[RMDB]
RNA sequence: GGGAACGACUCGAGUAGAGUCGAAAAACGUUGAUUUGGAUUUACUCCGAGGAGACGAACUACCACGAACAGGGGACACUCUACCCGUGGCGUCUCCGUUUGACGAGUAAGUCCUAAGUCAACAUGCCACCUUGACGCUUCGGCGUCAAGAAAAGAAACAACAACAACAAC
Reactivity to 2A3 in 0.01 (KOAc 150mM, MgCl2 10mM, bicine 150mM(pH8.5), 24C), signal-to-noise 5, nucleotides 027 to 129: a030c070g000u000u000g000a010u020u000u020g010g000a010u000u000u000a000c010u000c000c000g010a040g000g000a010g010a000c000g000a010a010c040u140a090c020c000a000c010g040a120a040c030a130g020g020g010g110a040c150a090c260u040c040u020a070c020c020c010g000u010g000g020c000g000u000c000u000c000c000g020u120u100u130g040a030c010g000a000g000u000a000a000g010u000c010c000u000a000a000g000u010c000a000a000c010a010u080g070c010c000a070c000
Reactivity to DMS in 0.01 (KOAc 150mM, MgCl2 10mM, bicine 150mM(pH8.5), 24C), signal-to-noise 2, nucleotides 027 to 129: a090c000g030u000u010g010a020u020u000u050g000g000a010u080u000u000a010c040u030c030c000g050a080g070g000a010g000a040c000g040a090a060c080u060a300c000c010a010c040g010a130a300c120a090g040g010g030g080a250c000a160c100u080c040u030a090c100c070c010g060u020g020g000c070g000u010c030u020c030c000g010u060u030u150g030a160c300g000a040g010u030a030a000g000u040c000c000u030a010a050g020u000c000a030a000c000a090u020g030c060c000a060c080